[RMDB]
RNA sequence: GGGAACGACUCGAGUAGAGUCGAAAACUUGAGUUAAUUGAGUUUAUUUAAGCGCUGAUACAAUGCUGCCAGAAGAAUUUCAAUGCCAAGAACAGUUCAGUUUGAUUCAGUUUACAAACUGGUCUACCUUACAUACUGCGUUCGCGCAGUAUGUAAGAAAAGAAACAACAACAACAAC
Reactivity to 2A3 in 0.01 (KOAc 150mM, MgCl2 10mM, bicine 150mM(pH8.5), 24C), signal-to-noise 1, nucleotides 027 to 126: c020u020u020g040a040g130u110u290a080a130u060u020g000a000g000u000u060u090a270u050u100u030a080a000g030c010g000c090u000g020a030u050a190c100a060a000u110g010c040u040g000c000c010a040g000a170a000g010a060a040u140u200u070c000a010a010u020g000c000c010a010a000g040a060a030c020a030g020u090u030c020a020g000u030u060u030g120a100u080u030c010a030g170u040u050u010a100c060a010a100a020c010u000g010g010u020c020u000a070c000
Reactivity to DMS in 0.01 (KOAc 150mM, MgCl2 10mM, bicine 150mM(pH8.5), 24C), signal-to-noise 2, nucleotides 027 to 126: c020u000u000g020a020g010u000u020a090a120u000u020g000a080g000u000u000u000a060u020u000u000a140a120g020c030g000c020u010g020a130u000a120c220a080a090u010g000c010u000g010c000c030a230g020a050a110g020a030a030u000u000u000c060a060a030u010g000c050c010a030a020g000a060a080c140a040g020u000u000c010a040g010u000u010u000g010a090u000u000c190a080g000u000u000u010a070c130a020a060a010c010u000g000g010u010c020u010a090c130
Structure probing data (2A3 and DMS) for a 177-nucleotide construct.
Source: RMDB library RFMREP, as collected in RNAgym.
For 2A3 the reverse transcriptase was SuperScript II with manganese.
DMS adducts were read by reverse transcription with MarathonRT.
Values cover nucleotides 27 to 126.
Values are in units of 0.01, from 0 to 300, in steps of 10.